Chemical mapping of a 177-nucleotide RNA with 2A3 and DMS. 2A3 adducts were read by reverse transcription with SuperScript II with manganese. Values cover nucleotides 27 to 126. The RNA was probed in 150 mM KOAc, 10 mM MgCl2 and 150 mM bicine (pH 8.5) at 24 C. For DMS the reverse transcriptase was MarathonRT.
[RMDB]
RNA sequence: GGGAACGACUCGAGUAGAGUCGAAAAAUAAGUAACGAUAAAGGGGGCGAGAAACCCCCUCGCCGUAAGACUAAGGUUUCCACAGCUAUGCUAAUCAGCUGUGGGUUAGUCAGGACCUAACGCGUACGUAUGGCGAAGAUUUCGAUCUUCGCCAUACAAAAGAAACAACAACAACAAC
Reactivity to 2A3 in 0.01 (KOAc 150mM, MgCl2 10mM, bicine 150mM(pH8.5), 24C), signal-to-noise 2, nucleotides 027 to 126: a000u180a040a040g110u070a170a010c020g020a080u060a090a150a020g020g000g000g020g000c050g020a020g070a080a070a040c000c010c000c000c000u000c000g000c000c010g080u040a120a000g010a040c000u000a010a010g080g090u030u120u000c000c000a000c000a000g000c000u040a010u200g100c060u150a110a100u110c050a040g000c000u000g000u000g000g000g020u010u010a000g000u000c000a030g110g060a040c000c010u030a040a010c080g000c010g080u060a060c080
Reactivity to DMS in 0.01 (KOAc 150mM, MgCl2 10mM, bicine 150mM(pH8.5), 24C), signal-to-noise 2, nucleotides 027 to 126: a050u020a070a110g010u000a060a100c020g000a030u040a170a070a020g010g040g010g030g050c000g010a050g030a020a080a180c030c010c020c030c000u000c010g000c030c020g060u010a190a090g000a040c000u000a010a020g000g010u010u050u060c000c020a010c020a000g000c000u010a060u010g010c190u060a070a130u040c120a000g000c030u010g000u000g000g000g010u000u010a000g000u000c020a100g000g000a230c010c010u000a020a060c090g000c060g000u000a070c240